[RMDB]
RNA sequence: GGGAACGACUCGAGUAGAGUCGAAAAUUUGCUGAGCUUCUUGUGGAUCAAUGUCACUAUUCUUCUCUGCAUCAUUUACUAAAAUAGUGAUUUCAUUAUUGCCUAUUCUAGCAAAACCGCCCAUCAGAGCCAUCGUUAACCAUUGGUUAGCAAGGCGUGGACAUUUACCGUUCGCGGUAAAUGUCCAAAAAGAAACAACAACAACAAC
Reactivity to 2A3 in 0.01 (KOAc 150mM, MgCl2 10mM, bicine 150mM(pH8.5), 24C), signal-to-noise 2, nucleotides 027 to 156: u070u090u010g000c030u050g020a130g030c080u250u040c000u040u170g050u190g050g010a040u170c120a090a180u110g040u000c000a000c010u020a050u010u040c030u180u100c300u000c040u210g060c050a080u110c000a020u170u180u300a180c130u170a100a180a000a060u010a000g040u000g030a010u000u010u160c070a000u020u190a030u120u000g030c000c000u020a140u080u050c060u000a020g000c000a000a000a000a050c000c070g000c020c000c000a080u140c060a060g100a010g090c010c000a060u170c100g020u010u000a000a000c000c010a280u110u300g000g000u000u000a000g000c050a060a000g000g000c000g020